[RMDB]
RNA sequence: GGGAACGACUCGAGUAGAGUCGAAAAUAAGGCUCCUAAGACUGCCACCUUCCAGUGGGAUAAGCCCUGCCUCCUACUGGGCCCACAAUGUGCAGAGAACACUUGGGACUACCUGGCUUUCUGGAUACACAAAUAUUGAUCCAAUCUGGACUAAUUACCUCAAUGACGGUUUCGACCGUCAUUGAGGAAAAGAAACAACAACAACAAC
Reactivity to 2A3 in 0.01 (KOAc 150mM, MgCl2 10mM, bicine 150mM(pH8.5), 24C), signal-to-noise 1, nucleotides 027 to 156: u080a000a000g040g040c030u010c010c000u040a060a030g010a020c000u000g020c000c030a020c020c030u150u100c000c010a000g010u000g000g030g010a000u010a150a080g020c010c010c010u060g010c000c040u010c010c000u000a010c010u000g000g010g000c000c000c000a120c060a070a080u110g030u030g000c000a010g030a030g030a200a010c020a000c060u050u080g020g020g010a010c020u080a040c030c000u030g070g000c000u020u130u010c040u060g040g020a060u200a060c050a000c000a160a100a070u200a110u160u140g060a040u000c030c000a030a040u050c160u130g000g030a060c040u070a030a190u140u030a080
Structure probing data (2A3) for a 207-nucleotide construct. Reactivities are rounded to 0.1 and cut off at 0 and 3. The RNA was probed in 150 mM KOAc, 10 mM MgCl2 and 150 mM bicine (pH 8.5) at 24 C. 2A3 adducts were read by reverse transcription with SuperScript II with manganese. It was measured as part of the RMDB library OK3TST.